[RMDB]
RNA sequence: GGGAACGACUCGAGUAGAGUCGAAAAUCUUAGCGUUUCGACGCUAAGAAAACGUGGUGGAGGAGGUGGAAAGCUCGGCAUUAAAGGGAUAAAAACAUCUACAUAUAGGGUCGUUCGCGACCCUAAACUAUAUACCGCGUUUCGACGCGGUAUAUAGAAAAGAAACAACAACAACAAC
Reactivity to 2A3 in 0.01 (KOAc 150mM, MgCl2 10mM, bicine 150mM(pH8.5), 24C), signal-to-noise 1, nucleotides 027 to 126: u020c000u010u000a000g010c010g020u020u070u090c160g090a010c000g020c000u000a000a000g010a010a000a010a000c090g090u090g000g030u100g050g030a090g040g000a050g000g080u070g010g000a040a000a000g000c020u030c090g030g000c010a000u060u150a140a000a040g080g020g040a030u150a080a150a010a020a020c050a100u080c040u120a050c060a110u230a040u100a230g010g000g010u030c010g020u030u070c100g000c010g010a010c000c000c000u000a010a000a000
Reactivity to DMS in 0.01 (KOAc 150mM, MgCl2 10mM, bicine 150mM(pH8.5), 24C), signal-to-noise 3, nucleotides 027 to 126: u000c000u000u000a000g010c010g030u000u000u010c180g020a040c010g010c000u000a010a020g000a020a020a110a090c090g020u010g010g010u010g000g000a110g010g000a070g000g010u000g010g020a060a080a120g010c050u010c070g020g030c090a060u010u000a070a100a150g010g010g000a080u000a050a020a080a060a050c170a070u000c070u000a070c160a110u000a160u010a030g000g010g010u000c000g010u000u020c140g020c030g000a010c000c000c000u000a000a010a060

Conditions: 150 mM KOAc, 10 mM MgCl2 and 150 mM bicine (pH 8.5), 24 C. Structure probing data (2A3 and DMS) for a 177-nucleotide construct. DMS adducts were read by reverse transcription with MarathonRT. For DMS, 2,067 sequencing reads were counted. High 2A3 reactivity points to a flexible backbone, as in loops and unpaired stretches. The data come from the RNA Mapping Database (RMDB), library M2PK50. 2A3 adducts were read by reverse transcription with SuperScript II with manganese.